[RMDB]
RNA sequence: GGGAACGACUCGAGUAGAGUCGAAAACGGGGAUGCCUUGUGCAGGAGGUACCUUCUGUGCCGUGGGCUGGUGUCCGUGGGAGCUGCAGCCGUGGGGUGUUCCUGGGGGGUUCCUGCAGCAGCGGGGACAUAUUUACCAAUUCGUUGGUAAAUAUGUAAAAGAAACAACAACAACAAC
Reactivity to DMS in 0.01 (KOAc 150mM, MgCl2 10mM, bicine 150mM(pH8.5), 24C), signal-to-noise 9, nucleotides 027 to 126: c070g010g000g010g010a100u000g010c010c010u000u010g020u000g010c010a020g010g000a020g010g010u010a090c180c020u000u000c020u000g010u000g010c030c300g010u010g010g010g020c020u000g010g020u000g010u000c030c030g020u000g000g000g010a110g020c020u000g000c020a040g010c070c050g010u010g010g000g000g020u010g010u000u000c010c010u000g010g000g000g010g010g000u000u010c110c000u000g010c020a050g010c040a090g010c090g000g000g000g000
Reactivity to 2A3 in 0.01 (KOAc 150mM, MgCl2 10mM, bicine 150mM(pH8.5), 24C), signal-to-noise 9, nucleotides 027 to 126: c030g000g000g010g020a030u110g020c000c010u050u120g040u040g030c010a010g010g040a010g050g100u260a210c030c000u020u020c020u030g030u020g020c030c050g130u220g000g030g000c020u030g020g040u110g060u060c030c020g020u080g010g020g010a060g000c030u080g010c010a020g020c020c060g180u100g010g020g010g030u100g080u150u110c010c020u040g030g000g000g010g010g010u080u060c010c000u010g000c010a020g010c010a000g020c030g000g010g010g000

About this RNA: This 177-nucleotide RNA was probed chemically with DMS and 2A3. Conditions: 150 mM KOAc, 10 mM MgCl2 and 150 mM bicine (pH 8.5), 24 C. The DMS profile rests on 83,425 reads. For 2A3, 33,082 sequencing reads were counted. Reactivities are given for positions 27 through 126. The data come from the RNA Mapping Database (RMDB), library OK2TRN. For 2A3 the reverse transcriptase was SuperScript II with manganese.